Source: RMDB library RFM100, as collected in RNAgym. This 177-nucleotide RNA was probed chemically with DMS and 2A3. DMS adducts were read by reverse transcription with MarathonRT. For 2A3 the reverse transcriptase was SuperScript II with manganese.
RNA sequence: GGGAACGACUCGAGUAGAGUCGAAAACUGAUAAUCCUUUCCGUAAAUUGCCUGUAAGUCAGAUAAGGCGAACAGCAAGGAUACCUGCUGUUUUCUGAAUCUUGGAGAUAUUCUUAUCAGAGAUAGGUAUGACGCAAUCCUUCGGGAUUGCGUCAUAAAAAGAAACAACAACAACAAC
Reactivity to DMS in 0.01 (KOAc 150mM, MgCl2 10mM, bicine 150mM(pH8.5), 24C), signal-to-noise 1, nucleotides 027 to 126: c150u000g000a030u040a000a090u000c060c060u000u000u000c030c020g020u010a040a130a110u000u000g030c000c050u000g010u000a060a150g000u020c110a030g000a100u060a060a210g000g000c020g000a070a060c020a000g030c000a000a080g000g000a160u070a080c060c070u000g000c000u000g000u000u000u040u000c000u080g000a180a030u000c020u000u000g010g010a040g000a080u000a020u010u000c280u000u030a000u020c090a050g000a070g000a110u000a000g000g020
Reactivity to 2A3 in 0.01 (KOAc 150mM, MgCl2 10mM, bicine 150mM(pH8.5), 24C), signal-to-noise 2, nucleotides 027 to 126: c000u000g000a050u090a100a130u030c010c010u030u030u000c000c000g000u000a000a000a250u230u080g000c010c030u080g050u100a070a140g080u100c100a040g050a120u080a030a030g040g000c000g000a000a000c000a000g030c060a130a150g090g000a160u100a160c000c000u000g000c000u000g000u020u000u010u010c010u000g060a090a080u000c000u040u110g130g000a200g090a020u200a070u070u040c000u050u150a160u070c000a040g000a000g000a010u070a050g050g000